RNA sequence: GGGAACGACUCGAGUAGAGUCGAAAAUUUGUCGCUUUUCAUUAUAGGUCAUAUGGGACUUUUUUCUACACAAAAAUAGGCUCCAUAAUAUCCAUAGGGGAUUUACCCACUACAAAUAUUAUAGAGUUCACCGGUAGAAAUUCGUUUCUACCGGUGAAAAAGAAACAACAACAACAAC
Reactivity to 2A3 in 0.01 (KOAc 150mM, MgCl2 10mM, bicine 150mM(pH8.5), 24C), signal-to-noise 1, nucleotides 027 to 126: u020u010u050g040u000c090g030c070u010u050u060u060c060a130u070u080a190u080a220g000g000u030c050a060u000a070u070g000g030g000a020c000u020u010u000u000u020u030c020u090a070c000a020c070a110a030a050a050a030u060a030g030g020c010u000c000c000a000u030a070a050u040a030u000c020c030a050u060a060g000g000g090g000a000u150u040u200a260c000c000c000a080c010u120a080c000a000a130a000u020a020u050u150a160u080a100g090a000g020u050

Chemical mapping of a 177-nucleotide RNA with 2A3. For 2A3, 516 sequencing reads were counted. The RNA was probed in 150 mM KOAc, 10 mM MgCl2 and 150 mM bicine (pH 8.5) at 24 C.